RNA sequence: GGGAACGACUCGAGUAGAGUCGAAAAAAAAGAUAUGGAUCUGGAACUACGACACCUGGCUUCUUGGAUUUAGCGUCGGAAACGACGCUUGUCAGAAGCCAUGUGUCGCCAGAUCCUAAGUCAAAAAUCCAACAGUUAUGUUCGCAUAACUGUUGGAAAAAGAAACAACAACAACAAC
Reactivity to 2A3 in 0.01 (KOAc 150mM, MgCl2 10mM, bicine 150mM(pH8.5), 24C), signal-to-noise 1, nucleotides 027 to 126: a040a030a030a090g040a030u100a040u130g020g000a000u040c010u020g030g000a080a090c150u200a030c300g000a020c010a010c010c050u020g000g080c000u020u020c030u090u260g210g000a060u300u300u300a010g000c000g010u000c020g010g060a010a040a070c010g000a010c000g000c030u000u010g000u010c000a010g010a010a000g040c020c000a000u010g010u000g000u010c000g040c010c000a010g000a020u000c000c000u000a010a000g020u010c000a070a030a000a000a170
Reactivity to DMS in 0.01 (KOAc 150mM, MgCl2 10mM, bicine 150mM(pH8.5), 24C), signal-to-noise 2, nucleotides 027 to 126: a100a040a160a090g030a050u000a300u010g010g010a000u000c000u000g000g000a160a050c100u020a300c020g010a020c010a020c010c050u010g000g020c000u000u010c010u000u010g010g000a020u000u000u000a010g040c020g010u010c010g030g010a110a050a240c010g010a030c000g000c000u000u000g000u000c000a030g000a050a000g000c010c000a000u000g000u000g020u010c000g010c010c000a000g000a000u000c000c000u000a020a090g010u020c040a080a100a060a080a110
Chemical mapping of a 177-nucleotide RNA with 2A3 and DMS. For DMS the reverse transcriptase was MarathonRT. It was measured as part of the RMDB library TTRDES. Values cover nucleotides 27 to 126. For DMS, 1,643 sequencing reads were counted.